The data come from the RNA Mapping Database (RMDB), library RFMREP. The record gives the reactivity of an RNA of 177 nucleotides to DMS and 2A3. 2A3 is a SHAPE reagent: it acylates the 2'-hydroxyl of flexible nucleotides of all four kinds. For DMS, 7,403 sequencing reads were counted. The RNA was probed in 150 mM KOAc, 10 mM MgCl2 and 150 mM bicine (pH 8.5) at 24 C.
RNA sequence: GGGAACGACUCGAGUAGAGUCGAAAAGUGGUUUGAUUGCUUUGACAGCUAGGAUGUUAGCUUGGAAGCAGCUAUUCAUUUAAAGAGUGCGUAACAGCUCACUAGUCGAGCGAUCGAGCGUGGAUAACUGUUAAGAUUUCUUCGGAAAUCUUAACAGAAAAGAAACAACAACAACAAC
Reactivity to DMS in 0.01 (KOAc 150mM, MgCl2 10mM, bicine 150mM(pH8.5), 24C), signal-to-noise 6, nucleotides 027 to 126: g030u000g010g010u000u000u000g010a030u010u000g000c010u010u000u010g030a070c260a110g010c070u010a070g000g010a060u000g010u010u000a010g000c010u010u010g020g010a100a100g020c150a020g000c020u000a030u000u000c020a030u000u000u010a050a060a120g000a080g010u000g000c090g010u000a100a110c170a170g010c010u000c030a080c030u000a060g020u000c020g010a010g000c030g000a020u000c010g000a030g010c040g010u000g010g010a120u010a060a180
Reactivity to 2A3 in 0.01 (KOAc 150mM, MgCl2 10mM, bicine 150mM(pH8.5), 24C), signal-to-noise 4, nucleotides 027 to 126: g130u140g020g030u040u030u050g010a030u010u000g000c020u110u080u270g040a050c030a020g040c050u070a040g050g050a030u040g030u080u010a000g000c020u030u080g070g010a070a020g060c020a000g000c000u010a040u090u120c030a030u020u030u130a060a070a020g070a020g020u050g020c070g040u050a100a020c020a050g000c000u010c020a020c010u040a040g040u080c020g000a000g000c000g000a000u010c010g000a000g010c030g040u090g010g050a070u080a190a110